[RMDB]
Overview
An RNA of 177 nucleotides, treated with DMS and 2A3 and read out base by base. Conditions: 150 mM KOAc, 10 mM MgCl2 and 150 mM bicine (pH 8.5), 24 C. As a SHAPE reagent, 2A3 marks flexible, mostly unpaired nucleotides at the ribose 2'-OH. 2A3 adducts were read by reverse transcription with SuperScript II with manganese. For DMS, 10,390 sequencing reads were counted. Source: RMDB library M2PK50, as collected in RNAgym. Reactivities are given for positions 27 through 126.

RNA sequence: GGGAACGACUCGAGUAGAGUCGAAAAUCUUAGGAGUUCGCUCCUAAGAAAAGGGCGUGGCCGUGCCAGCUCUUCGGAGCAAUACUCGGCCAGUCACUCAGAAUGCGCUACCCUUCGGGGUAGCGAAGACCAUACUACUUUUCGAAGUAGUAUGGUCAAAAGAAACAACAACAACAAC
Reactivity to DMS in 0.01 (KOAc 150mM, MgCl2 10mM, bicine 150mM(pH8.5), 24C), signal-to-noise 7, nucleotides 027 to 126: u000c000u000u000a010g000g010a010g020u000u020c290g020c000u000c000c000u000a010a010g000a010a030a110a090g000g010g000c010g000u010g020g020c000c010g010u000g000c110c110a300g010c000u000c000u010u010c160g030g000a020g010c000a070a100u010a100c050u000c010g000g010c000c010a050g000u000c030a090c050u000c070a160g010a100a090u010g000c010g000c000u000a000c000c000c000u000u020c180g020g010g000g000u000a000g010c000g000a010a040
Reactivity to 2A3 in 0.01 (KOAc 150mM, MgCl2 10mM, bicine 150mM(pH8.5), 24C), signal-to-noise 6, nucleotides 027 to 126: u010c000u000u000a010g010g000a010g010u060u060c120g130c060u000c000c000u000a000a000g000a010a020a000a000g060g000g000c140g100u110g010g000c010c000g000u010g050c050c070a070g000c010u000c000u020u040c230g120g010a000g000c000a020a010u050a130c020u000c010g010g000c010c000a000g010u000c000a020c030u090c020a050g100a170a080u190g050c000g000c000u000a000c000c000c000u000u050c220g050g000g000g000u000a000g000c000g000a000a000